[RMDB]
Annotation: Source: RMDB library RFM100, as collected in RNAgym. This 177-nucleotide RNA was probed chemically with 2A3. As a SHAPE reagent, 2A3 marks flexible, mostly unpaired nucleotides at the ribose 2'-OH. The RNA was probed in 150 mM KOAc, 10 mM MgCl2 and 150 mM bicine (pH 8.5) at 24 C.
RNA sequence: GGGAACGACUCGAGUAGAGUCGAAAAUGAAUAGUCGAGUAAGUCCUGAUGUUCCUUAGACUACCGUAAGGAUGUCUUAAUCCAGACUUGAUUUGGUGAGAAUCGAGGCUCAGGGGUUGACUAUUCUCUGGCAGGUGAAUUUCGAUUCACCUGCCAGAAAAGAAACAACAACAACAAC
Reactivity to 2A3 in 0.01 (KOAc 150mM, MgCl2 10mM, bicine 150mM(pH8.5), 24C), signal-to-noise 2, nucleotides 027 to 126: u100g040a010a000u000a010g020u000c040g010a010g000u040a030a010g100u140c000c000u040g010a060u050g010u270u300c010c040u020u040a000g010a030c040u110a080c000c000g050u060a140a040g030g020a060u070g000u030c000u000u040a020a010u000c010c000a010g030a030c000u170u250g030a300u250u030u020g040g000u010g030a010g060a030a050u120c100g010a000g000g000c010u000c010a000g000g000g000g000u000u040g000a000c000u000a010u010u000c000u010